[RMDB]
RNA sequence: GGGAACGACUCGAGUAGAGUCGAAAAUCCGAGGGGACCGUCCCUCGGUAAUGGCGAAUGGGACCCAGAACUCUCUCUAGAUUCCCAGAGAGAAUCGAGAGAAAACUGGCUCUCCCUUAGCCAUCCGUAACGUUAUAGUUCGCUAUAACGAAAAGAAACAACAACAACAAC
Reactivity to 2A3 in 0.01 (KOAc 150mM, MgCl2 10mM, bicine 150mM(pH8.5), 24C), signal-to-noise 9, nucleotides 027 to 129: u030c000c000g000a010g030g030g020g050a150c060c070g300u280c020c000c000u000c000g000g000u010a010a020u030g000g000c000g020a040a030u040g000g000g000a010c030c000c000a010g020a060a050c010u000c000u000c000u000c010u060a080g000a010u010u010c010c040c170a050g040a010g000a010g000a110a000u010c010g000a000g000a000g000a010a020a010a030c000u000g000g010c010u000c000u000c000c010c000u000u010a000g000c000c000a000u000c000c010g070u080a100a070
Reactivity to DMS in 0.01 (KOAc 150mM, MgCl2 10mM, bicine 150mM(pH8.5), 24C), signal-to-noise 9, nucleotides 027 to 129: u020c000c000g020a000g020g000g020g010a090c190c220g100u100c010c000c000u000c000g000g000u030a020a000u000g000g010c010g030a130a050u020g000g000g000a000c200c000c000a010g030a110a210c150u020c010u000c000u010c020u020a140g000a000u000u000c010c000c090a150g030a090g000a180g000a020a000u020c030g000a020g010a000g080a020a030a080a130c000u020g000g010c020u030c050u020c010c000c010u020u010a180g010c000c000a000u020c010c020g010u040a070a090
An RNA of 170 nucleotides, treated with 2A3 and DMS and read out base by base. Reactivities are given for positions 27 through 129. In probing experiments dimethyl sulfate is read out at A N1 and C N3, which are open when not base-paired. DMS adducts were read by reverse transcription with MarathonRT.